This 177-nucleotide RNA was probed chemically with 2A3 and DMS. The DMS profile rests on 2,039 reads. The RNA was probed in 150 mM KOAc, 10 mM MgCl2 and 150 mM bicine (pH 8.5) at 24 C. Values cover nucleotides 27 to 126. High 2A3 reactivity points to a flexible backbone, as in loops and unpaired stretches. The data come from the RNA Mapping Database (RMDB), library OK1LIB. The 2A3 profile rests on 4,116 reads.

RNA sequence: GGGAACGACUCGAGUAGAGUCGAAAAUCUUACAUCACGCUGCGAUACGUUGGAGGCUUUUAACUUAACUCGAUCAACCCAAGCUCGACGCGCAGCUACAACGCACCACGCAGACACGCAUCCAAGACAUUUAUCGCGGUUUCGACCGCGAUAAAUGAAAAGAAACAACAACAACAAC
Reactivity to 2A3 in 0.01 (KOAc 150mM, MgCl2 10mM, bicine 150mM(pH8.5), 24C), signal-to-noise 6, nucleotides 027 to 126: u020c010u060u130a070c030a100u100c070a020c070g030c050u030g030c040g080a110u070a260c060g050u030u050g270g120a110g020g060c030u080u110u050u090a070a060c060u070u110a060a020c020u020c120g050a080u060c040a030a120c010c000c010a010a030g050c040u050c040g040a000c030g000c010g000c010a000g000c010u030a030c030a080a050c060g000c020a030c010c010a020c010g060c010a000g040a040c010a010c050g040c000a000u000c010c020a030a010g140a070
Reactivity to DMS in 0.01 (KOAc 150mM, MgCl2 10mM, bicine 150mM(pH8.5), 24C), signal-to-noise 2, nucleotides 027 to 126: u000c020u000u000a110c090a120u000c070a130c020g020c020u010g030c000g020a120u030a190c110g000u000u030g000g020a070g020g070c040u030u030u020u020a060a170c040u010u010a090a120c010u000c030g030a040u000c020a070a300c060c000c050a110a100g040c060u000c030g020a050c100g030c070g110c010a030g020c050u010a020c130a060a070c090g030c050a040c040c040a000c050g000c000a040g010a090c030a000c000g000c010a070u000c060c010a040a160g010a010